[RMDB]
RNA sequence: GGGAACGACUCGAGUAGAGUCGAAAAACACGCUCCAUGUCCGCAACGGGCCAAUUCGAGCCAUUUGCUGUCACUGACCUGCUGCCGAUGGCGCAAGAGGUGUGUCCGUAGCUUUCCUCGAAUCCCUGAGGGAUUUAGGUUUCGACCUAAAUCCCUCAAAAGAAACAACAACAACAAC
Reactivity to 2A3 in 0.01 (KOAc 150mM, MgCl2 10mM, bicine 150mM(pH8.5), 24C), signal-to-noise 4, nucleotides 027 to 126: a000c070a010c030g030c000u050c040c020a060u060g040u030c020c020g000c000a040a030c030g000g040g000c000c010a060a070u100u060c050g030a020g010c000c010a010u020u010u030g010c020u040g180u270c020a040c130u060g060a080c010c030u040g020c000u020g020c030c020g050a040u080g030g000c000g010c030a040a030g030a020g100g020u050g030u080g020u050c000c010g020u020a010g000c010u020u040u030c030c000u010c000g020a040a030u020c000c000c000u020
Reactivity to DMS in 0.01 (KOAc 150mM, MgCl2 10mM, bicine 150mM(pH8.5), 24C), signal-to-noise 1, nucleotides 027 to 126: a090c110a070c080g000c000u070c010c010a120u000g000u000c040c010g030c070a110a120c000g000g000g000c040c000a050a130u020u010c020g040a110g000c130c080a000u000u000u000g010c040u010g000u000c020a010c060u000g000a050c100c190u010g000c080u000g040c030c000g000a160u000g080g000c040g020c200a000a020g000a040g000g010u020g010u030g000u000c000c000g000u000a030g000c090u040u000u010c010c040u000c010g000a120a100u000c000c000c010u040